Overview: Structure probing data (DMS and 2A3) for a 177-nucleotide construct. It was measured as part of the RMDB library TTRDES. The DMS profile rests on 4,624 reads. DMS adducts were read by reverse transcription with MarathonRT. Values are in units of 0.01, from 0 to 300, in steps of 10. For 2A3, 4,851 sequencing reads were counted.

RNA sequence: GGGAACGACUCGAGUAGAGUCGAAAAAAAAGAUAUGGACCUUGCCGAGAGUCUAGCACGAAGACAGUCGAUCGGAAACGAUCGAUCGAGUGCUAGGACUCGUUUGACGCAAGGUCCUAAGUCAAAACUUUAAUUAGGUCUUCGGACCUAAUUAAAGAAAAGAAACAACAACAACAAC
Reactivity to DMS in 0.01 (KOAc 150mM, MgCl2 10mM, bicine 150mM(pH8.5), 24C), signal-to-noise 5, nucleotides 027 to 126: a060a060a100a070g000a060u000a300u010g010g000a020c010c000u000u000g010c000c010g000a120g010a020g000u000c010u010a020g010c000a010c000g010a090a140g000a050c300a100g000u000c000g000a010u000c000g020g000a140a110a120c000g010a010u010c000g000a010u000c010g010a070g030u000g010c000u000a010g030g000a030c000u000c000g000u020u000u010g030a220c300g000c010a020a000g000g000u000c000c000u000a000a070g020u010c010a090a060a050a190
Reactivity to 2A3 in 0.01 (KOAc 150mM, MgCl2 10mM, bicine 150mM(pH8.5), 24C), signal-to-noise 2, nucleotides 027 to 126: a000a000a000a000g060a020u070a040u110g010g000a000c000c020u000u010g020c050c020g300a300g000a000g180u030c000u000a000g020c000a010c030g090a130a000g030a040c040a040g040u020c000g010a000u010c000g000g000a050a040a060c010g000a000u000c000g000a000u020c010g030a010g020u000g020c000u020a000g020g060a030c010u030c000g030u020u090u180g040a010c030g000c000a000a000g000g000u000c000c000u000a010a000g020u000c000a030a040a050a060